[RMDB]
Overview: An RNA of 177 nucleotides, treated with 2A3 and DMS and read out base by base.

RNA sequence: GGGAACGACUCGAGUAGAGUCGAAAAAUAGGUGUUGGUGGCAUUGCACAAGACCGUCAUAUUCCAGCAUUGCUGAAACUCAAAGACACAGUCUCAUUAGUUGCAGUACAAGAUAUUAAUACAGUGCCAGCACUAUGUCUUUCGAGACAUAGUGCUGAAAAGAAACAACAACAACAAC
Reactivity to 2A3 in 0.01 (KOAc 150mM, MgCl2 10mM, bicine 150mM(pH8.5), 24C), signal-to-noise 5, nucleotides 027 to 126: a000u160a060g060g000u050g010u070u050g030g070u040g030g000c050a070u010u120g000c030a000c000a070a040g070a050c020c000g060u060c020a090u070a080u120u080c020c000a040g010c050a190u050u190g000c010u040g010a060a020a010c040u030c090a080a040a010g040a010c060a010c030a300g030u010c040u000c030a130u070u070a030g020u010u020g030c000a000g010u060a070c020a080a050g090a060u080a080u180u220a140a110u130a120c060a030g010u000g050c000
Reactivity to DMS in 0.01 (KOAc 150mM, MgCl2 10mM, bicine 150mM(pH8.5), 24C), signal-to-noise 3, nucleotides 027 to 126: a050u000a050g010g050u010g000u040u010g000g020u000g000g000c000a000u010u010g000c080a040c020a050a020g000a040c050c030g020u000c070a090u010a140u000u020c000c010a100g040c070a100u030u010g010c000u000g020a060a020a010c020u010c250a050a060a000g010a020c030a150c180a120g010u000c030u010c090a140u030u010a000g010u020u010g030c060a020g030u000a090c140a060a070g030a050u000a100u040u020a080a070u020a080c060a060g030u010g000c050